RNA sequence: GGGAACGACUCGAGUAGAGUCGAAAAAAGCCAGACUUCUUGGAGGUUAUAGUGAUGAUUUUGAUAGUAUCUUGAGCCGUCUCAUAAUAACCUCAGGGUGAGAGAUGGCCAACAGGAGACAGUCGAGCAACCACCGUUCAUUCGUGAACGGUGGUUGAAAAGAAACAACAACAACAAC
Reactivity to DMS in 0.01 (KOAc 150mM, MgCl2 10mM, bicine 150mM(pH8.5), 24C), signal-to-noise 1, nucleotides 027 to 126: a040a170g000c020c040a120g000a060c060u020u000c020u010u020g010g010a060g000g040u020u010a070u010a090g010u000g010a160u030g000a070u000u000u000u000g000a040u020a070g000u000a240u010c010u010u000g010a210g000c020c000g010u000c010u000c000a070u000a190a120u010a080a060c000c000u000c190a130g000g000g000u000g000a160g010a020g000a030u000g000g030c000c020a070a030c010a020g000g010a030g000a000c060a280g010u000c000g000a180g010

This 177-nucleotide RNA was probed chemically with DMS. Source: RMDB library OK2TST, as collected in RNAgym. Reactivities are given for positions 27 through 126. The reactions ran in a buffer of 150 mM KOAc, 10 mM MgCl2 and 150 mM bicine (pH 8.5), at 24 C. Reactivities are rounded to 0.1 and cut off at 0 and 3.